[RMDB]
RNA sequence: GGGAACGACUCGAGUAGAGUCGAAAAGGCAGUUCUUGCCCGGGGAGGAUACUUAAUGCUCGGGUCCGCGCAGCAGAGUCAGUCCUCCCAGAGCCCGCCGGGACCCCCAUGCGUCUGGCAGGCGCGGCCUAUUCCUUGUCUUCGGACAAGGAAUAGGAAAAGAAACAACAACAACAAC
Reactivity to DMS in 0.01 (KOAc 150mM, MgCl2 10mM, bicine 150mM(pH8.5), 24C), signal-to-noise 3, nucleotides 027 to 126: g010g000c030a030g000u020u020c100u030u020g000c000c000c030g010g000g020g000a020g010g000a020u010a040c060u020u010a090a120u010g000c000u000c040g000g000g010u020c090c050g000c070g010c120a040g020c060a080g010a020g010u000c210a080g000u000c010c000u000c000c000c030a040g000a090g010c060c030c040g010c080c010g000g000g000a170c040c010c020c020c050a080u000g010c030g010u020c000u010g010g000c090a130g010g000c000g020c040g000g000
Reactivity to 2A3 in 0.01 (KOAc 150mM, MgCl2 10mM, bicine 150mM(pH8.5), 24C), signal-to-noise 6, nucleotides 027 to 126: g030g000c010a020g050u110u130c070u180u110g030c000c010c000g010g000g000g000a010g010g000a010u020a100c010u060u110a160a060u150g010c010u020c040g050g020g150u060c070c050g110c010g000c070a020g010c000a000g010a020g090u100c080a010g050u000c020c000u010c000c010c000a000g000a000g000c000c010c010g010c020c010g030g010g030a050c000c000c000c000c010a040u130g010c020g030u030c010u040g100g020c040a070g020g000c000g000c000g000g020